Conditions: 150 mM KOAc, 10 mM MgCl2 and 150 mM bicine (pH 8.5), 24 C. Structure probing data (2A3 and DMS) for a 207-nucleotide construct. The 2A3 profile rests on 1,321 reads.
[RMDB]
RNA sequence: GGGAACGACUCGAGUAGAGUCGAAAAAAUGCCGCCUCAGUUCCAAGCUCUUUCGUGGCACUGUAAACAGUCCUAUUGAGUUAGGGGCAGUCAACCACGUUGCGAAGCUAAAUUAUCUGGUCAAGAGUUACGAUUCCCUACUUCGGUAGGGAAUCAAGACUAUGGGAUUCUUCGGAAUCCCAUAGUCAAAAGAAACAACAACAACAAC
Reactivity to 2A3 in 0.01 (KOAc 150mM, MgCl2 10mM, bicine 150mM(pH8.5), 24C), signal-to-noise 3, nucleotides 027 to 156: a000a000u060g010c020c000g020c020c010u080c030a010g020u090u030c030c010a070a010g000c000u020c000u050u030u040c020g020u040g020g050c090a000c020u060g030u080a140a020a070c030a090g080u070c000c000u020a040u080u130g130a270g240u050u050a050g000g000g020g000c000a010g020u010c000a020a060c020c000a000c000g020u040u050g030c100g140a050a010g020c030u060a090a040a080u160u120a080u080c070u060g000g040u040c070a120a060g030a030g070u060u080a030c070g000a000u000u000c010c000c000u000a010c000u010u010c130g050g000u000a000g000g030g000a000a000u000c000a010a000
Reactivity to DMS in 0.01 (KOAc 150mM, MgCl2 10mM, bicine 150mM(pH8.5), 24C), signal-to-noise 1, nucleotides 027 to 156: a120a080u000g010c000c030g030c000c000u010c020a140g000u000u000c030c030a150a300g020c030u000c040u020u020u000c020g020u000g000g000c020a010c030u020g000u000a050a100a070c040a160g020u010c010c020u000a040u000u000g000a250g010u000u000a020g000g020g030g050c010a030g000u000c050a050a040c030c010a030c100g040u010u010g040c130g020a090a100g010c030u000a060a030a040u010u010a010u010c050u000g010g000u000c030a110a070g000a170g030u020u000a110c110g000a050u010u000c010c000c000u000a040c000u000u010c200g030g020u010a000g000g020g010a000a000u000c000a000a250
The data come from the RNA Mapping Database (RMDB), library M2RFPK.